This 177-nucleotide RNA was probed chemically with 2A3 and DMS. DMS adducts were read by reverse transcription with MarathonRT. Values cover nucleotides 27 to 126. The RNA was probed in 150 mM KOAc, 10 mM MgCl2 and 150 mM bicine (pH 8.5) at 24 C.
RNA sequence: GGGAACGACUCGAGUAGAGUCGAAAACUGCUAUCAUCAUGUGACUCUCUGCUUGGUCUGCAUGUUGAAGCAAUAGCAGACUUUGGGACUGGAACUUGGCUUCGGAAACACCCUCAGAGAGGGUCCAGCCUUCACUCCUUUUCGAAGGAGUGAAGGCAAAAGAAACAACAACAACAAC
Reactivity to 2A3 in 0.01 (KOAc 150mM, MgCl2 10mM, bicine 150mM(pH8.5), 24C), signal-to-noise 1, nucleotides 027 to 126: c010u020g040c030u070a040u210c030a010u020c010a010u070g050u040g040a000c000u000c000u040c030u050g060c110u140u150g000g000u030c010u040g000c050a050u040g040u060u060g110a100a040g100c060a000a020u040a070g000c010a000g010a040c000u030u090u140g070g030g050a100c080u040g050g020a040a060c000u030u110g130g000c040u000u010c070g010g090a030a070a010c070a050c020c030c010u000c030a070g070a000g000a000g100g010g000u000c040c020a010
Reactivity to DMS in 0.01 (KOAc 150mM, MgCl2 10mM, bicine 150mM(pH8.5), 24C), signal-to-noise 1, nucleotides 027 to 126: c010u000g010c060u010a060u000c050a030u010c120a020u020g010u010g000a090c030u000c020u000c140u010g010c070u010u000g000g010u000c020u000g040c020a020u010g010u000u000g000a060a140g010c130a220a020u000a030g000c030a030g010a070c030u000u000u010g000g010g020a180c050u010g000g020a060a050c050u010u000g010g010c060u000u020c080g000g000a120a060a110c200a040c000c000c010u010c020a140g000a000g000a010g000g010g010u000c060c090a060